[RMDB]
RNA sequence: GGGAACGACUCGAGUAGAGUCGAAAAGAUAUGGAGUCCCAAGAAACGAGGAUCGUCAUGUCGGAAACGACAUAAGACGGGAGUUUCUGGGACUCCUAAGUCAAAGUUGUCACUUCGGUGACAACAACCUAGUGAUUUGGUUCGCCAAAUCACUAGGAAAAGAAACAACAACAACAAC
Reactivity to 2A3 in 0.01 (KOAc 150mM, MgCl2 10mM, bicine 150mM(pH8.5), 24C), signal-to-noise 2, nucleotides 027 to 126: g000a000u000a030u080g000g010a000g000u010c010c010c010a000a070g010a000a010a000c090g040a300g080g020a020u000c010g000u020c010a000u010g000u020c000g000g010a000a010a020c000g000a000c000a000u050a060a170g000a000c010g000g030g000a050g000u020u000u040c020u000g000g010g000a000c010u000c010c000u000a010a000g000u000c000a020a050a130g000u000u000g000u000c000a010c000u050u120c300g200g000u000g010a000c000a000a000c000a000a010
Reactivity to DMS in 0.01 (KOAc 150mM, MgCl2 10mM, bicine 150mM(pH8.5), 24C), signal-to-noise 2, nucleotides 027 to 126: g010a020u000a090u020g000g000a040g020u000c000c000c010a030a100g010a000a010a010c000g000a070g010g000a030u010c000g000u000c010a090u000g030u000c000g030g000a020a010a060c000g000a010c000a020u000a170a160g000a020c010g000g010g000a020g020u000u000u000c010u000g000g000g000a000c000u010c010c000u000a000a050g010u000c010a120a090a200g020u000u000g010u000c000a020c000u000u030c250g050g030u000g000a020c000a000a010c000a070a130